[RMDB]
RNA sequence: GGGAACGACUCGAGUAGAGUCGAAAAGCCCGGACUCCUACGGGAGGCUGCAGCAACGAAUCUUCCGCAAUGGGCGCAAGCCUGACGGAGCAAUGCCGCGUGCGGGAUGAAGCGUCUUGACGUGUAACACGUCCACUACUUUCGAGUAGUGGACGUGAAAAGAAACAACAACAACAAC
Reactivity to DMS in 0.01 (KOAc 150mM, MgCl2 10mM, bicine 150mM(pH8.5), 24C), signal-to-noise 4, nucleotides 027 to 126: g010c010c010c000g030g010a080c020u000c020c020u010a060c170g010g020g000a050g010g000c030u000g040c050a080g000c050a090a050c060g000a070a040u000c010u010u010c000c000g020c040a090a080u040g000g000g000c010g000c240a120a140g010c020c000u010g000a070c040g000g000a070g010c220a110a110u040g000c020c010g000c070g000u010g000c020g000g000g000a040u040g000a080a020g010c000g000u000c050u010u010g000a060c060g010u000g030u030a180a240
Reactivity to 2A3 in 0.01 (KOAc 150mM, MgCl2 10mM, bicine 150mM(pH8.5), 24C), signal-to-noise 5, nucleotides 027 to 126: g020c000c010c000g020g040a030c010u000c000c000u080a100c200g040g000g000a010g030g010c050u140g030c020a050g010c010a020a070c010g070a060a080u000c030u060u000c020c000g030c060a060a160u160g020g000g030c020g010c050a090a040g020c000c000u070g050a040c030g030g000a010g020c030a030a080u150g050c000c020g040c030g040u050g020c020g000g000g000a070u180g050a070a010g020c020g050u020c010u060u160g060a070c020g070u030g040u080a070a000

An RNA of 177 nucleotides, treated with DMS and 2A3 and read out base by base. Source: RMDB libraries RFM100 and RFMREP, as collected in RNAgym. The reactions ran in a buffer of 150 mM KOAc, 10 mM MgCl2 and 150 mM bicine (pH 8.5), at 24 C. Reactivities are given for positions 27 through 126. DMS adducts were read by reverse transcription with MarathonRT.